[RMDB]
RNA sequence: GGGAACGACUCGAGUAGAGUCGAAAAGUAGACCUCAGGAACCCCAUCAGAUGGCUCCUUUUGCUGGAGGAAAGUGGCAUCUGCCUAGGCAAAUGUGGUCCUAGGAAAACGCUUGCCUUUAGAGACAUCGAUAUACGAGGUUCGCCUCGUAUAUCGAAAAAGAAACAACAACAACAAC
Reactivity to DMS in 0.01 (KOAc 150mM, MgCl2 10mM, bicine 150mM(pH8.5), 24C), signal-to-noise 2, nucleotides 027 to 126: g020u010a090g010a110c030c020u010c120a060g020g000a100a180c060c050c050c060a080u010c100a070g000a070u000g020g010c000u000c070c030u010u010u000u000g010c060u000g010g000a020g000g010a030a020a050g020u000g010g000c050a050u000c070u010g010c040c030u000a010g010g000c060a090a090a090u000g030u000g000g000u010c000c010u000a040g010g000a030a040a060a060c040g010c030u010u000g000c010c000u000u000u020a050g010a190g010a120c150a060
Reactivity to 2A3 in 0.01 (KOAc 150mM, MgCl2 10mM, bicine 150mM(pH8.5), 24C), signal-to-noise 1, nucleotides 027 to 126: g010u050a010g050a110c000c020u030c070a040g130g080a100a120c070c260c080c010a040u090c020a020g070a060u040g000g020c010u020c020c000u020u110u140u240g060c010u030g010g030a010g010g010a020a030a020g030u020g010g050c050a100u030c050u050g010c020c010u030a010g010g000c040a060a140a160u300g060u140g090g030u150c000c000u010a010g030g000a000a050a000a010c020g010c000u010u040g010c000c000u020u030u010a050g020a010g000a040c030a100

An RNA of 177 nucleotides, treated with DMS and 2A3 and read out base by base. The reactions ran in a buffer of 150 mM KOAc, 10 mM MgCl2 and 150 mM bicine (pH 8.5), at 24 C. 2A3 adducts were read by reverse transcription with SuperScript II with manganese.